[RMDB]
RNA sequence: GGGAACGACUCGAGUAGAGUCGAAAAGGAGGCCCGGGCUGGGGCCUCCCAGCGCCUCGGCCAUAUUGAAUAGCUUCGACUGGACCGUCUUUGUCUGCGAAGUCCUGUCCCAAGUUCCAGCCGCGUCAGCGGGGGUAUCAUUCGUGAUACCCCCGCUAAAAGAAACAACAACAACAAC
Reactivity to DMS in 0.01 (KOAc 150mM, MgCl2 10mM, bicine 150mM(pH8.5), 24C), signal-to-noise 1, nucleotides 027 to 126: g040g010a150g050g030c000c020c200g000g020g010c040u000g030g020g040g000c010c120u010c020c020c040a030g020c220g020c070c030u010c170g040g000c000c030a190u020a060u010u020g020a130a110u000a130g020c020u000u000c020g020a060c110u000g020g000a050c000c180g000u020c080u010u020u010g000u010c040u000g000c050g000a040a080g010u000c040c050u010g000u010c010c020c010a110a120g010u010u000c030c010a010g010c010c020g040c240g010u020c160
Structure probing data (DMS) for a 177-nucleotide construct. The RNA was probed in 150 mM KOAc, 10 mM MgCl2 and 150 mM bicine (pH 8.5) at 24 C.